An RNA of 207 nucleotides, treated with DMS and 2A3 and read out base by base.
[RMDB]
RNA sequence: GGGAACGACUCGAGUAGAGUCGAAAAAGCACGGUUUUUGAGGACGCAUUUUGUCCGUGUGGUAAUGCCCUCCUUUACACUUUCUCGCAUGGUGCGGGAGUGUGGAGAGGAAACAAAAGCUAGUCUCGAUAGGCGGUUAACUUCGGUUAACCGCCAACACUACGGAAUAGUUCGCUAUUCCGUAGUGAAAAGAAACAACAACAACAAC
Reactivity to DMS in 0.01 (KOAc 150mM, MgCl2 10mM, bicine 150mM(pH8.5), 24C), signal-to-noise 3, nucleotides 027 to 156: a220g020c010a030c020g020g010u000u000u000u000u000g010a080g010g020a040c020g000c110a150u010u010u000u000g020u000c000c010g000u000g040u000g020g010u000a070a080u000g010c000c000c010u000c020c000u000u000u000a060c010a010c000u000u000u000c000u000c020g000c000a300u010g030g020u000g040c000g000g000g000a020g020u000g010u000g010g010a050g020a090g000g000a130a030a050c020a020a050a060a080g010c060u000a150g030u000c010u010c060g010a160u010a120g020g040c000g010g000u000u000a000a000c010u000u010c300g050g010u000u000a000a000c000c000g020c010c000a000a020
Reactivity to 2A3 in 0.01 (KOAc 150mM, MgCl2 10mM, bicine 150mM(pH8.5), 24C), signal-to-noise 5, nucleotides 027 to 156: a000g020c000a010c000g000g020u010u000u010u020u020g060a090g010g020a020c060g020c150a180u000u000u000u000g020u000c020c010g000u010g010u020g010g120u160a070a060u150g050c000c000c000u030c010c000u010u040u030a000c010a000c000u080u160u040c020u020c010g050c030a100u240g300g030u290g120c000g000g000g000a020g000u010g000u000g010g000a020g010a020g010g040a020a030a000c010a000a010a000a000g070c020u100a050g010u000c010u000c030g050a080u110a150g010g000c010g000g000u000u000a010a000c010u030u060c110g010g000u000u000a000a000c010c000g010c000c000a000a000
Background:
The DMS profile rests on 10,362 reads. For 2A3, 6,054 sequencing reads were counted. It was measured as part of the RMDB library M2RFOK.